[RMDB]
RNA sequence: GGGAACGACUCGAGUAGAGUCGAAAAGGGGUCGAGUGUCCUCGUCACCAGGAGCUUGGAUUUAUGGUGCUGAAGCCUCCACGGCACCAUUGUCAGCUCCUGCAAGUCGAGGAGACUCGACGGAGGCACCCAAAAUCUGCCGGUUCGCCGGCAGAAAUACUACUCUUCAGUUCGCUGAAGAGUAGUAAAAAGAAACAACAACAACAAC
Reactivity to DMS in 0.01 (KOAc 150mM, MgCl2 10mM, bicine 150mM(pH8.5), 24C), signal-to-noise 1, nucleotides 027 to 156: g030g030g010g000u000c010g040a030g020u000g000u000c010c040u010c000g030u000c040a180c150c000a040g020g010a010g020c000u010u000g070g010a200u000u020u000a020u000g010g040u010g040c000u000g000a070a060g000c010c020u000c010c050a300c000g010g010c010a070c010c000a020u020u000g000u020c000a090g000c000u000c010c020u010g000c000a040a110g010u010c020g020a110g000g000a070g010a040c020u000c000g020a000c000g000g020a000g040g050c060a130c000c000c020a100a050a150a130u010c000u010g000c010c010g000g040u000u000c300g000c030c020g000g030c000a000g000a010a060a160
Reactivity to 2A3 in 0.01 (KOAc 150mM, MgCl2 10mM, bicine 150mM(pH8.5), 24C), signal-to-noise 4, nucleotides 027 to 156: g060g010g020g000u020c010g000a000g010u060g190u010c000c000u010c030g060u110c040a300c300c000a010g010g000a000g000c090u260u300g200g010a080u200u300u130a030u110g000g000u000g000c000u010g020a140a040g000c000c000u000c000c000a040c000g010g000c000a000c000c000a000u000u010g020u030c150a010g000c000u000c010c000u010g010c050a300a250g010u020c000g000a000g000g000a000g020a000c000u000c000g000a000c010g000g000a000g000g010c000a030c010c020c000a000a070a000a150u010c010u020g000c000c010g000g080u030u040c270g050c090c000g010g000c000a000g000a000a000a000
Chemical mapping of a 207-nucleotide RNA with DMS and 2A3. Source: RMDB library RNAMAK, as collected in RNAgym. The reactions ran in a buffer of 150 mM KOAc, 10 mM MgCl2 and 150 mM bicine (pH 8.5), at 24 C. 2A3 adducts were read by reverse transcription with SuperScript II with manganese. DMS adducts were read by reverse transcription with MarathonRT. For DMS, 2,574 sequencing reads were counted.